[RMDB]
RNA sequence: GGGAACGACUCGAGUAGAGUCGAAAAAAAAGAUAUGGAUGACAGAACUACAGCUACUAACACGACGACGAUUAAUCGGAAACGAUUAAUCAUCAGUGUUACUAGCUGCUGUCAUCCUAAGUCAAAAGACUACAUAACUCUUCGGAGUUAUGUAGUCAAAAGAAACAACAACAACAAC
Reactivity to 2A3 in 0.01 (KOAc 150mM, MgCl2 10mM, bicine 150mM(pH8.5), 24C), signal-to-noise 1, nucleotides 027 to 126: a000a000a020a070g010a000u020a010u060g000g000a010u010g010a000c010a020g040a110a010c130u280a060c300a010g020c000u010a010c000u000a020a000c010a010c010g270a040c120g000a000c020g010a000u010u010a010a010u000c000g020g000a020a020a000c010g000a020u000u000a000a000u000c010a010u010c010a040g000u020g000u000u000a000c000u000a000g000c000u010g000c000u000g010u000c010a000u000c000c000u000a000a000g000u010c010a020a100a080a080
Reactivity to DMS in 0.01 (KOAc 150mM, MgCl2 10mM, bicine 150mM(pH8.5), 24C), signal-to-noise 2, nucleotides 027 to 126: a040a030a050a100g000a020u000a080u010g010g000a010u000g010a010c000a000g000a100a010c130u020a300c010a010g000c000u000a000c140u000a020a000c000a000c000g020a120c250g000a010c110g030a000u000u000a000a000u000c000g000g000a010a030a050c010g000a010u000u000a000a000u000c000a030u000c000a030g010u000g000u000u000a010c130u000a010g000c010u000g000c000u000g010u000c000a000u000c000c000u000a000a040g020u000c010a070a080a120a100

Chemical mapping of a 177-nucleotide RNA with 2A3 and DMS.
2A3 adducts were read by reverse transcription with SuperScript II with manganese.
The data come from the RNA Mapping Database (RMDB), library TTRDES.
Reactivities are given for positions 27 through 126.